The record gives the reactivity of an RNA of 170 nucleotides to DMS and 2A3. The data come from the RNA Mapping Database (RMDB), library 15KLIB. DMS adducts were read by reverse transcription with MarathonRT.

RNA sequence: GGGAACGACUCGAGUAGAGUCGAAAAAUGUUGGUGAUAGUGCGGAAGUUGCAGUUAAAAUGUUUAAAAAAAACUUUUAACGUACCAAUGGAAAAACUCAAAACACUAGUUCCAACUGCAGAAGCUGAGCCUGGCGAGUUCGCUCGCCAGAAAAGAAACAACAACAACAAC
Reactivity to DMS in 0.01 (KOAc 150mM, MgCl2 10mM, bicine 150mM(pH8.5), 24C), signal-to-noise 4, nucleotides 027 to 129: a030u100g020u000u070g000g000u110g040a050u000a010g020u030g000c060g140g060a130a020g020u050u000g050c200a110g030u010u000a070a000a020a190u100g010u010u010u100a010a010a010a070a010a010a010a000c050u060u000u000u000a010a050c010g050u030a080c220c090a080a170u100g050g100a130a030a000a010a090c170u040c130a060a050a020a020c040a000c000u000a020g040u020u030c010c000a010a020c020u000g050c060a050g000a110a050g020c080u060g020a050g010c050
Reactivity to 2A3 in 0.01 (KOAc 150mM, MgCl2 10mM, bicine 150mM(pH8.5), 24C), signal-to-noise 2, nucleotides 027 to 129: a000u080g000u000u000g010g000u040g020a080u030a020g000u000g000c040g020g090a090a000g000u030u010g040c050a060g020u000u030a020a000a020a020u220g010u000u010u120a190a130a060a000a020a000a000a010c000u050u000u000u000a000a000c000g000u030a030c040c080a040a030u110g100g020a020a160a010a000a060c040u030c140a080a030a000a000c010a000c010u000a010g110u160u010c000c000a000a000c000u020g000c010a020g010a110a000g000c080u140g020a000g040c030